[RMDB]
RNA sequence: GGGAACGACUCGAGUAGAGUCGAAAAAAAAGCUCCUCAAUUGGAUUCGUAAUCGUCUUCCAGGAAUGCCGAUUUCCAACUUCACUUCCGACUGGAACGACGGAGUUGCUCUCGGUGCACUUGUCAAAUUACCUACUGGAUUCGUCCAGUAGGUAAUAAAAGAAACAACAACAACAAC
Reactivity to 2A3 in 0.01 (KOAc 150mM, MgCl2 10mM, bicine 150mM(pH8.5), 24C), signal-to-noise 4, nucleotides 027 to 126: a010a000a010a000g070c060u040c020c020u060c030a060a160u070u070g060g020a040u090u080c050g040u140a080a170u090c030g020u020c050u090u000c010c010a030g010g080a110a060u120g010c010c000g030a030u050u040u010c030c020a010a020c000u030u040c040a020c040u040u000c000c040g300a300c250u280g000g010a030a010c060g080a050c040g000g010a000g020u010u030g000c000u000c010u000c030g020g020u040g020c040a020c080u110u100g110u100c050a070a140
Reactivity to DMS in 0.01 (KOAc 150mM, MgCl2 10mM, bicine 150mM(pH8.5), 24C), signal-to-noise 6, nucleotides 027 to 126: a080a080a100a130g010c120u000c010c010u000c100a090a110u010u000g030g010a090u000u000c090g010u010a110a080u000c040g000u000c040u000u000c030c010a050g000g000a070a070u000g020c040c010g000a090u010u000u000c140c010a030a040c070u000u000c040a070c090u000u000c020c010g000a170c190u010g010g010a020a030c130g020a060c090g020g010a030g010u000u000g010c080u000c120u000c020g010g010u000g010c110a060c070u000u010g000u000c100a060a080